[RMDB]
RNA sequence: GGGAACGACUCGAGUAGAGUCGAAAAGAUAUGGAUAGAUAAGAUCCGAACUACGAGGCCCAUCGGAAACGAUGGGCUCGCGGAUCUAAGUUCUAUCCUAAGUCAAACCAACAGUUCGCUGUUGGAAGAUGUCAAUUUUGUUCGCAAAAUUGACAUCAAAAGAAACAACAACAACAAC
Reactivity to 2A3 in 0.01 (KOAc 150mM, MgCl2 10mM, bicine 150mM(pH8.5), 24C), signal-to-noise 2, nucleotides 027 to 126: g030a020u060a040u190g010g010a010u000a010g000a030u040a090a070g000a000u000c020c000g050a130a130c210u260a040c230g160a060g290g300c000c000c030a010u000c010g030g070a120a050a040c010g010a020u000g000g000g030c000u010c000g000c010g000g000a000u000c010u020a080a060g050u050u000c000u010a000u000c000c010u000a070a010g000u000c020a070a020a100c010c010a000a010c000a000g110u140u170c300g050c190u000g040u020u020g000g000a000a060
Reactivity to DMS in 0.01 (KOAc 150mM, MgCl2 10mM, bicine 150mM(pH8.5), 24C), signal-to-noise 2, nucleotides 027 to 126: g010a020u020a300u010g000g000a010u000a000g000a020u010a220a060g000a000u030c010c000g000a030a090c140u030a300c010g000a020g020g000c010c000c010a040u000c010g040g020a110a100a080c000g000a050u000g010g000g000c000u000c000g000c030g000g010a010u000c000u010a030a110g010u010u000c000u010a010u010c000c000u000a060a080g000u000c080a140a130a280c000c000a000a010c010a010g000u000u030c300g040c000u000g000u000u000g000g000a090a080

An RNA of 177 nucleotides, treated with 2A3 and DMS and read out base by base.
Values are in units of 0.01, from 0 to 300, in steps of 10.
The 2A3 profile rests on 3,021 reads.
2A3 adducts were read by reverse transcription with SuperScript II with manganese.
For DMS, 1,574 sequencing reads were counted.
Reactivities are given for positions 27 through 126.